The record gives the reactivity of an RNA of 177 nucleotides to DMS and 2A3. The data come from the RNA Mapping Database (RMDB), library TTRDEL. The reactions ran in a buffer of 150 mM KOAc, 10 mM MgCl2 and 150 mM bicine (pH 8.5), at 24 C.
RNA sequence: GGGAACGACUCGAGUAGAGUCGAAAAGAUAUGGAGUAACAACAGGCACUGACUAUUCGGAAACGAACGAAUCAGUGAACUACCUGUGUUACUCCUAAGUCAAAACAUCAAGCUUCGGCUUGAUGAAGAUUGUUGUAGUCUUCGGACUACAACAAUCAAAAGAAACAACAACAACAAC
Reactivity to DMS in 0.01 (KOAc 150mM, MgCl2 10mM, bicine 150mM(pH8.5), 24C), signal-to-noise 3, nucleotides 027 to 126: g010a010u010a300u010g000g010a020g000u000a010a010c000a090a050c010a020g030g000c010a000c010u000g000a010c060u000a290u000u000c000g020g010a100a110a180c040g010a010a010c110g010a080a070u000c000a010g020u010g000a020a030c070u000a300c020c000u000g030u000g000u000u000a000c000u000c000c000u000a010a040g000u000c040a070a090a120a200c010a010u000c000a000a010g000c000u000u010c220g010g010c000u000u000g010a020u010g000a090a040
Reactivity to 2A3 in 0.01 (KOAc 150mM, MgCl2 10mM, bicine 150mM(pH8.5), 24C), signal-to-noise 3, nucleotides 027 to 126: g000a000u050a010u140g000g000a010g000u020a060a010c220a040a050c000a010g030g000c010a000c010u000g020a010c050u070a090u090u000c000g030g030a060a090a080c010g010a040a020c030g090a100a240u010c000a010g000u020g030a030a050c070u130a070c050c020u000g010u000g000u000u000a000c000u000c020c000u000a020a000g000u000c020a010a010a050a160c000a000u000c010a010a000g000c010u050u250c300g170g000c000u000u030g010a000u000g000a010a020